[RMDB]
This 177-nucleotide RNA was probed chemically with DMS and 2A3.
RNA sequence: GGGAACGACUCGAGUAGAGUCGAAAAUUUGAACAUGGUAUGUUCAUACCGGACGUAUUCCGCCGAUACACCAUCAAUUCUGAAGACUCGGACGCGAUGGUCAUCCAAUCGACUAGUGGAGCGACCAUGCUCCAGAUUAUUUCGAUAAUCUGGAGCAAAAAGAAACAACAACAACAAC
Reactivity to DMS in 0.01 (KOAc 150mM, MgCl2 10mM, bicine 150mM(pH8.5), 24C), signal-to-noise 7, nucleotides 027 to 126: u010u010u010g010a000a030c020a030u000g020g020u010a300u010g020u000u000c010a050u000a090c100c050g010g000a040c070g010u000a140u010u000c020c020g020c030c030g010a040u000a120c250a050c020c010a030u000c020a050a300u000u010c030u000g000a090a150g020a160c190u010c010g020g010a020c110g020c300g010a020u000g000g010u000c090a060u000c110c120a080a050u010c030g020a110c120u010a090g020u000g010g010a030g010c060g000a080c020c030a160
Reactivity to 2A3 in 0.01 (KOAc 150mM, MgCl2 10mM, bicine 150mM(pH8.5), 24C), signal-to-noise 3, nucleotides 027 to 126: u060u020u040g010a010a000c020a020u080g180g130u300a040u100g040u030u010c010a000u040a040c040c040g010g030a020c010g010u030a210u160u040c020c010g000c020c010g020a030u030a050c050a010c030c000a010u020c010a000a080u060u020c020u040g070a160a080g180a280c110u010c070g010g000a010c020g020c020g040a020u010g000g030u020c010a050u000c010c010a060a050u050c030g080a070c090u070a040g060u020g050g020a010g000c020g020a010c000c020a050

It was measured as part of the RMDB library OK2TRN. For DMS the reverse transcriptase was MarathonRT.